[RMDB]
RNA sequence: GGGAACGACUCGAGUAGAGUCGAAAAGCAGAUCGCCGGUGAGUUCGGUCGCGCGUGGUUCGUGGAUCUGGCGCCGAUCACGGACCCCGACUUGGUGCCGGUCACGGUGGCGGGCGCGCUGGGACUGGGCAGCGGUGUCAUUCGUGACACCGCUGCCAAAAGAAACAACAACAACAAC
Reactivity to 2A3 in 0.01 (KOAc 150mM, MgCl2 10mM, bicine 150mM(pH8.5), 24C), signal-to-noise 1, nucleotides 027 to 126: g110c050a000g020a090u050c030g000c090c000g070g030u180g050a030g120u060u290c030g050g010u050c080g020c050g020c030g290u040g010g050u070u000c000g000u020g060g070a130u010c030u030g000g000c010g050c000c000g000a000u040c000a000c030g000g000a000c000c080c000c000g100a080c100u190u160g050g000u070g040c030c020g000g060u000c010a000c050g000g220u100g010g000c060g000g000g000c040g010c000g000c020u000g020g000g000a020c030u040g020

Notes: The record gives the reactivity of an RNA of 177 nucleotides to 2A3. The RNA was probed in 150 mM KOAc, 10 mM MgCl2 and 150 mM bicine (pH 8.5) at 24 C. For 2A3 the reverse transcriptase was SuperScript II with manganese.